Structure probing data (DMS and 2A3) for a 207-nucleotide construct. It was measured as part of the RMDB library OK3TST. Reactivities are given for positions 27 through 156. High 2A3 reactivity points to a flexible backbone, as in loops and unpaired stretches.
RNA sequence: GGGAACGACUCGAGUAGAGUCGAAAAUGAAUUAUCUUUGAAAGAAUGGCUAAAUGAUAAAUGUUAAGUCCUGUGCCUAUAUGGAGAGGACUCUGUACCAGCAUGAGUUAAUUUAAGUGGAUUCACUGCUAUUCAGUUCAUAGCACAUUAGUGACUAUGGAUACAGGUGAUUCGUCACCUGUAUCCAAAAAGAAACAACAACAACAAC
Reactivity to DMS in 0.01 (KOAc 150mM, MgCl2 10mM, bicine 150mM(pH8.5), 24C), signal-to-noise 1, nucleotides 027 to 156: u020g020a080a100u000u000a020u000c020u000u000u010g010a130a060a160g010a060a060u000g010g010c000u000a050a090a080u000g000a090u000a060a080a110u000g000u010u000a050a070g000u000c010c050u000g060u020g020c010c030u000a140u000a070u020g030g020a100g010a070g040g000a060c010u000c010u000g020u000a100c070c040a100g010c030a060u000g000a090g020u000u000a010a060u000u000u000a060a120g030u010g000g000a080u000u000c060a020c050u010g000c000u000a010u000u000c040a150g060u000u000c190a050u000a030g000c010a010c020a130u000u000a100g010u000g010a140c050u000a160
Reactivity to 2A3 in 0.01 (KOAc 150mM, MgCl2 10mM, bicine 150mM(pH8.5), 24C), signal-to-noise 3, nucleotides 027 to 156: u080g020a010a060u130u070a060u150c070u150u110u070g060a080a060a010g030a010a060u050g030g000c000u050a020a100a070u060g030a090u110a110a160a080u120g030u090u110a060a030g000u000c020c000u050g080u200g120c010c000u200a200u030a040u300g000g020a040g000a030g030g000a010c000u000c050u080g080u050a070c050c060a010g010c020a010u030g050a030g030u040u180a150a110u080u070u110a090a050g060u080g070g070a010u050u060c010a010c050u040g010c000u000a030u060u040c000a000g030u020u060c020a010u030a000g010c010a020c030a100u140u150a050g010u060g040a060c000u060a020